[RMDB]
RNA sequence: GGGAACGACUCGAGUAGAGUCGAAAACAACAAACAAAAACAACAAAGGCGUCUUGAGUGAUGACGCCACCGAGAAUCAUGGAUUCCAAGAAAAAGGAGACCAUGUUUCAAAACGGAAUCACUCAAACUAGUGCUAUGACUUCGGUCAUAGCACUAGAAAAGAAACAACAACAACAAC
Reactivity to DMS in 0.01 (KOAc 150mM, MgCl2 10mM, bicine 150mM(pH8.5), 24C), signal-to-noise 2, nucleotides 027 to 126: c050a100a190c210a010a120a140c270a170a050a100a080a130c300a150a090c060a090a170a150g000g000c010g000u000c000u000u060g010a000g040u000g030a000u000g000a000c000g000c010c060a000c150c080g080a060g060a000a000u030c000a100u000g000g000a020u010u030c060c000a070a300g000a070a040a040a300a190g000g000a000g000a050c000c000a000u000g070u000u000u020c000a290a030a060a020c180g000g000a150a040u010c010a000c000u000c000a100a070a100
Reactivity to 2A3 in 0.01 (KOAc 150mM, MgCl2 10mM, bicine 150mM(pH8.5), 24C), signal-to-noise 5, nucleotides 027 to 126: c050a020a010c050a020a160a030c090a030a120a100a050a020c120a080a000c050a080a230a070g050g000c010g000u000c000u060u100g000a000g000u030g010a020u020g000a000c000g020c010c010a000c000c020g060a040g010a000a010u020c000a000u000g000g030a060u030u050c010c000a090a050g210a290a150a100a010a030g020g010a020g010a000c000c000a000u000g010u000u010u010c040a050a030a000a000c090g080g040a020a020u020c000a000c000u000c000a000a020a030

An RNA of 177 nucleotides, treated with DMS and 2A3 and read out base by base. It was measured as part of the RMDB library OK1LIB. Values cover nucleotides 27 to 126. The RNA was probed in 150 mM KOAc, 10 mM MgCl2 and 150 mM bicine (pH 8.5) at 24 C. 2A3 adducts were read by reverse transcription with SuperScript II with manganese.